[RMDB]
RNA sequence: GGGAACGACUCGAGUAGAGUCGAAAAGUCUGAUCUGUGUGCUAGGUCCAUGGUUGGAAUGCCGUCUGCAUUUAAACUUCAAACUUGAAAAUCAAUCGGAAUGCUGCAUGCACCAGUGCGCCAGUUCAGUGCUAUUCCAGUUCGCUGGAAUAGCACUAAAAGAAACAACAACAACAAC
Reactivity to DMS in 0.01 (KOAc 150mM, MgCl2 10mM, bicine 150mM(pH8.5), 24C), signal-to-noise 2, nucleotides 027 to 126: g010u000c020u000g000a040u000c020u000g030u010g040u000g020c000u020a180g000g010u000c150c020a050u000g020g040u010u010g050g020a030a050u010g020c020c080g010u000c060u000g000c050a010u000u010u010a100a040a040c070u000u000c250a050a080a160c300u010u020g000a050a090a020a060u000c060a020a060u010c030g020g000a020a050u000g000c040u000g020c050a000u000g020c300a030c030c000a120g000u000g010c050g020c030c010a040g020u000u010c080
Reactivity to 2A3 in 0.01 (KOAc 150mM, MgCl2 10mM, bicine 150mM(pH8.5), 24C), signal-to-noise 1, nucleotides 027 to 126: g020u000c020u010g010a040u000c000u000g120u010g000u020g110c010u040a070g070g030u010c010c010a040u070g100g070u090u040g130g040a100a060u110g020c000c020g100u100c050u070g000c000a000u030u050u110a100a100a000c040u070u010c050a050a180a200c000u030u150g050a000a010a010a040u110c040a010a070u010c010g030g050a050a020u040g010c020u040g000c000a040u020g010c000a010c030c000a030g070u050g020c010g050c050c020a030g010u000u050c020
Structure probing data (DMS and 2A3) for a 177-nucleotide construct.
The 2A3 profile rests on 1,394 reads.
For 2A3 the reverse transcriptase was SuperScript II with manganese.